[RMDB]
RNA sequence: GGGAACGACUCGAGUAGAGUCGAAAAAGCGCCUCUUCACGCUCGUUGGAAGCCUCGACAAGAUCGAUCCUUGCCGCAGCCUCACGCAAGGCUGAUGGCUGCAUGUCGGGAUCACGAUUGAGGAGGAACUCAUGAUCGGUUUCGACCGAUCAUGAGUAAAAGAAACAACAACAACAAC
Reactivity to 2A3 in 0.01 (KOAc 150mM, MgCl2 10mM, bicine 150mM(pH8.5), 24C), signal-to-noise 2, nucleotides 027 to 126: a010g130c050g000c000c010u020c040u030u030c040a040c070g060c020u040c040g110u070u110g050g050a110a070g010c010c000u040c030g040a020c020a050a000g030a100u080c040g040a050u050c080c000u050u130g020c020c000g000c000a010g010c020c010u030c010a100c110g100c150a140a050g140g000c020u020g000a060u120g000g010c020u010g030c000a020u080g050u070c030g020g000g020a010u000c020a010c050g050a040u030u060g020a030g020g000a040g010g020a050
Reactivity to DMS in 0.01 (KOAc 150mM, MgCl2 10mM, bicine 150mM(pH8.5), 24C), signal-to-noise 3, nucleotides 027 to 126: a120g020c170g020c020c000u000c010u000u010c030a040c300g020c150u000c040g010u010u010g020g000a070a080g040c070c020u000c010g000a050c120a070a070g000a130u020c060g000a050u000c040c080u000u000g030c010c210g000c000a010g020c000c000u010c040a110c180g010c300a060a060g030g010c060u010g010a030u000g010g020c010u010g000c050a070u000g020u000c040g020g000g030a070u000c010a080c070g030a100u020u010g000a050g000g010a030g000g000a100
Chemical mapping of a 177-nucleotide RNA with 2A3 and DMS.
It was measured as part of the RMDB library OK2TST.
Conditions: 150 mM KOAc, 10 mM MgCl2 and 150 mM bicine (pH 8.5), 24 C.
As a SHAPE reagent, 2A3 marks flexible, mostly unpaired nucleotides at the ribose 2'-OH.
The DMS profile rests on 1,913 reads.
Values cover nucleotides 27 to 126.